[RMDB]
RNA sequence: GGGAACGACUCGAGUAGAGUCGAAAAGAUAUGGAACAUGGAUGCUUUGUCUGGGCUCGAUAAGGUGGUGUCGGAAACGACACCCACCUUUUGACGAGCAAGACAAAGCAUCCAUGUUCCUAAGUCACGUAAAACAACACUUCGGUGUUGUUUUACGAAAAGAAACAACAACAACAAC
Reactivity to DMS in 0.01 (KOAc 150mM, MgCl2 10mM, bicine 150mM(pH8.5), 24C), signal-to-noise 1, nucleotides 027 to 126: g020a060u000a300u020g000g000a020a000c000a020u000g000g000a010u000g020c000u000u000u010g000u000c000u010g000g010g020c000u000c000g000a150u010a030a040g020g060u000g000g060u000g000u000c000g000g000a240a100a240c000g000a010c000a000c240c040c010a000c000c000u000u000u000u000g000a170c190g020a030g000c000a130a010g000a020c000a000a010a010g020c000a000u000c000c000a000u000g030u000u000c000c000u000a020a030g000u000c030a270